The record gives the reactivity of an RNA of 177 nucleotides to 2A3 and DMS. The data come from the RNA Mapping Database (RMDB), library OK2TST. Conditions: 150 mM KOAc, 10 mM MgCl2 and 150 mM bicine (pH 8.5), 24 C. The DMS profile rests on 3,451 reads.
RNA sequence: GGGAACGACUCGAGUAGAGUCGAAAAUGUAGCAUUGCAUAUUGCUGAUGAUAAAGCGUUUGCUAAGUUAGUUCCUGCUGACAAAAGAACAGAUUCAGUUCCAGGAGAAGUUUAAUAAAUAAUUAGGUAACAGUACUCUAUUCGUAGAGUACUGUUAAAAAGAAACAACAACAACAAC
Reactivity to 2A3 in 0.01 (KOAc 150mM, MgCl2 10mM, bicine 150mM(pH8.5), 24C), signal-to-noise 2, nucleotides 027 to 126: u040g030u040a020g020c030a030u040u120g000c000a010u020a050u170u300g050c070u060g030a140u100g000a040u170a080a180a000g000c030g030u020u040u050g000c000u020a030a030g030u040u060a000g010u020u030c000c010u000g060c060u080g040a030c070a100a130a010a000g050a140a010c030a010g060a090u080u120c000a030g070u030u060c010c000a000g030g050a110g040a090a050g010u070u230u300a180a130u250a130a120a070u240a130a080u260u100a070g070g000
Reactivity to DMS in 0.01 (KOAc 150mM, MgCl2 10mM, bicine 150mM(pH8.5), 24C), signal-to-noise 4, nucleotides 027 to 126: u010g010u010a030g020c020a070u020u010g010c040a060u010a040u020u030g030c060u010g000a130u000g020a110u020a100a170a070g000c010g000u000u000u010g010c000u000a050a090g020u000u000a120g010u000u000c020c010u000g010c060u000g000a080c120a050a080a090a110g010a030a050c070a080g010a250u000u000c120a050g000u010u010c030c060a080g000g000a080g000a170a120g000u000u010u010a060a090u000a080a060a100u010a080a090u010u000a090g000g010
For DMS the reverse transcriptase was MarathonRT.